RNA sequence: GGGAACGACUCGAGUAGAGUCGAAAAGGCGAAUUACACGCCGAUAAUUACGACUACGCUGUAGCAGCUUAAUAACCUGCUACCGAUCCGCUGAGCCUCUCCCACGGGUGAAGAUGGAUCGUCAUUUUAGUGGGAUAGUUGCGGGGAGGGUCCACGGGAGGAAAAUUCAGUUCGCUGAAUUUUCCUCAAAAGAAACAACAACAACAAC
Reactivity to 2A3 in 0.01 (KOAc 150mM, MgCl2 10mM, bicine 150mM(pH8.5), 24C), signal-to-noise 2, nucleotides 027 to 156: g030g000c010g030a040a070u220u100a170c100a020c070g000c000c000g000a030u100a040a150u160u130a040c060g030a040c050u150a040c160g070c130u090g030u010a000g000c020a000g000c010u010u020a020a000u050a020a020c000c000u010g000c000u000a000c000c000g000a010u000c000c000g010c080u010g030a010g000c000c000u080c000u010c010c000c000a000c000g000g010g010u030g000a010a010g010a060u100g000g010a000u000c030g020u030c020a070u040u060u040u210a030g000u010g000g000g000a010u020a020g020u040u050g050c060g030g020g010g000a040g020g000g000u000c020c020a030c030g040g040
Reactivity to DMS in 0.01 (KOAc 150mM, MgCl2 10mM, bicine 150mM(pH8.5), 24C), signal-to-noise 1, nucleotides 027 to 156: g010g040c020g000a300a120u040u030a090c110a170c000g000c010c010g000a050u010a070a160u000u000a070c120g040a140c020u010a070c070g030c020u000g020u010a000g000c010a030g010c010u000u000a230a160u000a200a150c300c020u010g020c030u000a030c000c070g000a020u000c000c010g000c080u030g010a300g000c000c000u000c110u000c040c020c010a100c050g000g000g000u000g000a110a070g020a020u000g000g010a010u010c070g000u010c020a070u000u000u010u000a050g060u000g000g000g000a040u000a040g010u000u000g010c020g040g000g000g010a110g000g000g040u000c010c040a050c090g000g000
Annotation
Structure probing data (2A3 and DMS) for a 207-nucleotide construct.